[RMDB]
RNA sequence: GGGAACGACUCGAGUAGAGUCGAAAACUGGAAAAUCUAGAGGAUAUAUUCCUCCCAGAGCAUGAAAAGGAAAGGCUAGAACUGUUUUCUAAGCCAGAACAGUCAAAGGCCAAGCUUGACCCAAAGGUGCACAAGGACCUACUUGAAAUCCUUGAGCGCGUUAGAUAAAGUUCGCUUUAUCUAACGCAAAAGAAACAACAACAACAAC
Reactivity to DMS in 0.01 (KOAc 150mM, MgCl2 10mM, bicine 150mM(pH8.5), 24C), signal-to-noise 2, nucleotides 027 to 156: c080u030g000g000a120a050a110a090u010c030u000a070g000a060g030g010a050u010a220u020a090u010u000c000c010u000c030c000c050a070g010a130g000c060a070u000g010a110a080a100a120g000g010a110a180a150g020g020c000u000a130g030a080a050c010u010g010u010u010u000u000c020u000a060a150g030c150c200a070g000a010a040c030a040g010u000c050a070a150a210g030g010c010c010a080a120g020c020u000u010g040a290c040c000c010a040a090a070g030g040u000g020c010a080c020a010a010g020g040a020c050c040u000a150c080u010u000g000a110a030a110u000c000c000u010u000g010a160g030c130
Reactivity to 2A3 in 0.01 (KOAc 150mM, MgCl2 10mM, bicine 150mM(pH8.5), 24C), signal-to-noise 4, nucleotides 027 to 156: c010u040g000g020a060a060a020a120u130c140u130a090g000a010g030g010a000u080a020u040a080u300u100c000c000u020c000c010c000a030g010a020g040c030a080u120g080a110a070a040a020g090g010a140a050a030g010g000c010u020a010g050a110a020c010u010g040u010u040u050u050c060u120a090a080g050c080c030a000g030a000a000c000a000g000u020c040a090a110a060g040g000c000c000a010a010g030c010u060u060g050a040c000c000c000a030a100a000g030g000u050g010c030a010c010a100a000g010g000a010c000c020u090a130c070u120u120g010a080a080a050u060c010c000u020u020g010a040g030c080

Chemical mapping of a 207-nucleotide RNA with DMS and 2A3. The reactions ran in a buffer of 150 mM KOAc, 10 mM MgCl2 and 150 mM bicine (pH 8.5), at 24 C. Source: RMDB library OK3TST, as collected in RNAgym. For 2A3, 2,307 sequencing reads were counted.